Structure probing data (DMS and 2A3) for a 177-nucleotide construct.
[RMDB]
RNA sequence: GGGAACGACUCGAGUAGAGUCGAAAAGAUAUGGAACCCUACCCAACAGCAUACGUUCGGAAACGAACGUUAUGACAUGGAUGGGUUCCUAAGUCAAAAGCUUACGAGUGUUCGCACUCGUAAGCAACAAUAAGCGAACCUUCGGGUUCGCUUAUUGAAAAGAAACAACAACAACAAC
Reactivity to DMS in 0.01 (KOAc 150mM, MgCl2 10mM, bicine 150mM(pH8.5), 24C), signal-to-noise 2, nucleotides 027 to 126: g000a020u000a130u010g000g000a000a020c000c000c000u000a190c110c010c010a080a170c280a140g010c010a010u000a010c000g010u000u000c000g020g000a070a010a070c000g000a010a000c000g010u010u030a000u000g000a120c070a120u000g010g010a070u000g000g010g000u000u000c000c000u000a000a060g000u000c000a090a070a110a130g000c000u000u000a010c000g010a010g010u000g000u000u010c160g060c030a000c000u000c010g000u010a000a000g010c000a030a030
Reactivity to 2A3 in 0.01 (KOAc 150mM, MgCl2 10mM, bicine 150mM(pH8.5), 24C), signal-to-noise 2, nucleotides 027 to 126: g000a010u030a010u060g000g000a000a000c000c020c010u040a070c030c010c000a220a160c110a300g060c000a000u020a000c000g010u000u000c000g000g030a020a010a000c000g010a010a000c000g000u020u070a000u010g080a120c120a300u140g000g000a000u010g000g000g030u010u000c010c010u000a010a000g020u010c030a060a000a170a000g010c010u010u020a000c000g000a010g000u010g040u110u210c300g090c090a000c000u010c040g010u000a000a000g000c000a000a000

For DMS the reverse transcriptase was MarathonRT.
It was measured as part of the RMDB library TTRDEL.